[RMDB]
RNA sequence: GGGAACGACUCGAGUAGAGUCGAAAAGGGGUUAGCGUUUGCAAAACGCUCUUAUUGCAAUGAUCUGGAUUUAGCGCAAGUAGGUCCGAAAUCCAGAUCAACAUUUCGGACCUCCGCGCUAAUAAAAAUGUGUGACGUCAUUCGUGACGUCACACAUAAAAGAAACAACAACAACAAC
Reactivity to DMS in 0.01 (KOAc 150mM, MgCl2 10mM, bicine 150mM(pH8.5), 24C), signal-to-noise 1, nucleotides 027 to 126: g030g000g010g010u010u000a050g000c040g040u010u000u000g010c300a050a050a030a020c060g010c010u000c100u000u000a070u000u000g020c060a030a070u010g040a120u000c050u010g010g000a260u000u000u000a000g000c000g010c010a030a110g030u000a040g010g000u000c000c000g010a000a020a000u010c150c130a130g000a100u010c170a080a060c160a010u000u000u000c010g020g020a010c010c000u000c080c170g000c000g010c000u010a000a010u000a020a060a020a070

The record gives the reactivity of an RNA of 177 nucleotides to DMS. The reactions ran in a buffer of 150 mM KOAc, 10 mM MgCl2 and 150 mM bicine (pH 8.5), at 24 C. It was measured as part of the RMDB library M2PK90.